[RMDB]
RNA sequence: GGGAACGACUCGAGUAGAGUCGAAAAGAUAUGGACUAUCGAGGGAGCAGUUAUCGGAAACGAUAAUACUGCAUCGAUCUCGUUAGUCCUAAGUCAAAAUCCCUACAGAGGUUCGCCUCUGUAGGGAGUAACGGAAAGGGUUCGCCCUUUCCGUUACAAAAGAAACAACAACAACAAC
Reactivity to 2A3 in 0.01 (KOAc 150mM, MgCl2 10mM, bicine 150mM(pH8.5), 24C), signal-to-noise 4, nucleotides 027 to 126: g000a010u010a010u060g000g000a010c000u000a020u020c010g010a010g030g070g090a130g000c020a020g010u000u010a000u010c000g000g000a000a010a000c000g030a020u020a020a070u190a110c000u000g010c010a030u240c090g100a100u020c000u000c000g000u000u000a000g000u010c000c000u000a000a000g000u000c000a030a030a030a300u040c000c010c000u000a000c000a010g010a000g060g010u070u180c290g150c080c000u000c000u000g000u010a000g000g000g000a010
Reactivity to DMS in 0.01 (KOAc 150mM, MgCl2 10mM, bicine 150mM(pH8.5), 24C), signal-to-noise 4, nucleotides 027 to 126: g000a020u000a060u010g000g000a040c000u000a010u000c010g000a030g000g000g000a050g030c000a030g000u000u000a000u000c000g020g010a020a010a050c000g010a010u000a010a080u010a170c020u000g010c000a300u010c300g000a070u000c000u010c000g010u000u000a000g020u000c000c000u000a000a080g000u000c010a110a070a120a240u010c000c010c000u000a000c000a010g000a010g000g020u000u020c270g020c000c000u000c010u000g010u000a000g010g000g000a010